[RMDB]
RNA sequence: GGGAACGACUCGAGUAGAGUCGAAAAUGCCGACACCAGCGCCGCCAGCUGGUGCACUUCGCCUGGGAGCACUUCCGGCCCCGCUGCAAGUUCGUCUGGGGGCCCCAAGACAAGCUGCGGAGGUUCAGUAGAACGUCUAAUUCGUUAGACGUUCUACAAAAGAAACAACAACAACAAC
Reactivity to 2A3 in 0.01 (KOAc 150mM, MgCl2 10mM, bicine 150mM(pH8.5), 24C), signal-to-noise 2, nucleotides 027 to 126: u080g050c000c020g020a030c010a020c010c010a020g000c050g120c060c090g090c060c030a020g000c010u000g000g000u000g010c010a020c000u090u060c030g020c030c020u050g030g030g010a060g010c030a040c090u090u060c040c010g000g000c010c010c000c010g080c020u020g010c030a120a190g070u070u160c070g050u030c070u070g030g000g010g060g060c000c000c000c030a020a040g030a020c020a050a030g020c020u010g000c020g020g050a060g060g000u120u140c020a020
Reactivity to DMS in 0.01 (KOAc 150mM, MgCl2 10mM, bicine 150mM(pH8.5), 24C), signal-to-noise 4, nucleotides 027 to 126: u010g010c040c030g010a210c030a040c020c010a020g010c020g010c110c130g000c110c090a180g000c010u000g000g020u000g010c060a040c070u010u000c080g000c020c050u000g020g000g000a130g010c100a060c090u010u010c030c080g000g000c010c010c010c020g010c050u000g010c050a080a120g010u000u010c100g010u010c050u010g020g020g010g010g020c060c010c010c030a030a060g000a090c080a060a160g010c050u000g020c030g000g000a070g000g010u010u000c100a090
Structure probing data (2A3 and DMS) for a 177-nucleotide construct.
High 2A3 reactivity points to a flexible backbone, as in loops and unpaired stretches.
For DMS the reverse transcriptase was MarathonRT.